Chemical mapping of a 177-nucleotide RNA with 2A3 and DMS.
RNA sequence: GGGAACGACUCGAGUAGAGUCGAAAACGGGGUGACCAGGAAUGGGAUUCGAAACUGGUGUAGUUGCCGCCACCGCGGUGCACCAGUAAUGCUUCACGGUCUUCGUACCGAAGCUGCAGAUCGACGGGCACAAUGGAAUCUUCGGAUUCCAUUGUGCAAAAGAAACAACAACAACAAC
Reactivity to 2A3 in 0.01 (KOAc 150mM, MgCl2 10mM, bicine 150mM(pH8.5), 24C), signal-to-noise 1, nucleotides 027 to 126: c030g000g000g000g150u090g050a020c050c020a020g040g120a090a110u140g030g000g040a050u040u120c050g040a240a000a000c000u040g000g080u050g020u020a140g100u130u170g040c010c040g000c020c050a220c010c040g050c010g040g000u150g010c020a000c010c000a000g000u020a000a040u090g010c030u000u110c100a070c170g020g010u030c000u300u240c180g060u090a040c020c000g020a020a000g000c040u060g000c010a000g010a180u030c030g000a040c040g020g030
Reactivity to DMS in 0.01 (KOAc 150mM, MgCl2 10mM, bicine 150mM(pH8.5), 24C), signal-to-noise 2, nucleotides 027 to 126: c080g050g000g010g000u010g010a220c050c020a110g000g030a110a120u000g010g000g000a070u000u000c020g000a070a170a090c000u010g000g010u000g030u010a160g020u020u010g010c000c030g030c010c200a140c300c260g020c000g020g050u000g020c010a010c000c000a030g020u010a050a000u010g000c000u000u010c120a160c100g010g000u000c000u000u020c280g000u000a040c000c010g000a020a000g000c040u000g010c100a070g020a090u000c030g000a060c220g000g000
Reactivities are given for positions 27 through 126.
The RNA was probed in 150 mM KOAc, 10 mM MgCl2 and 150 mM bicine (pH 8.5) at 24 C.
Source: RMDB library OK2TST, as collected in RNAgym.
The DMS profile rests on 1,206 reads.
2A3 adducts were read by reverse transcription with SuperScript II with manganese.